[RMDB]
RNA sequence: GGGAACGACUCGAGUAGAGUCGAAAAUUUUUAAGUGUACGGUUAAUUCAGCAGUGCUAAGAACAUGCAGAAUGUUAUGGAACGAGCACCAUUACCCACUUCCAGAACUUUUUUGUCAAUCCAAACAUACCAGUCUCUCAUUCGUGAGAGACUGGUAAAAAGAAACAACAACAACAAC
Reactivity to 2A3 in 0.01 (KOAc 150mM, MgCl2 10mM, bicine 150mM(pH8.5), 24C), signal-to-noise 1, nucleotides 027 to 126: u130u130u000u000u040a070a060g000u000g060u020a050c070g000g040u000u090a060a010u230u070c040a040g000c000a000g080u000g000c000u080a110a000g020a060a050c020a010u010g070c000a080g110a260a060u110g010u170u130a080u110g050g040a060a000c020g010a080g020c020a000c000c000a050u110u000a000c000c000c000a000c020u030u000c040c000a070g000a170a090c050u010u090u000u000u000u090g080u040c040a070a120u000c010c130a000a000a140c000a030
Reactivity to DMS in 0.01 (KOAc 150mM, MgCl2 10mM, bicine 150mM(pH8.5), 24C), signal-to-noise 1, nucleotides 027 to 126: u000u000u010u020u000a010a100g100u050g000u000a050c100g000g000u040u050a020a080u020u010c040a120g000c040a070g010u010g000c050u000a040a160g030a050a120c100a050u040g000c110a110g000a080a000u080g000u030u000a020u000g000g000a070a070c100g110a170g000c040a060c000c000a090u000u000a210c000c030c000a030c070u000u000c050c080a170g000a030a010c150u030u060u000u120u090u000g000u000c090a040a270u000c000c020a040a040a090c200a080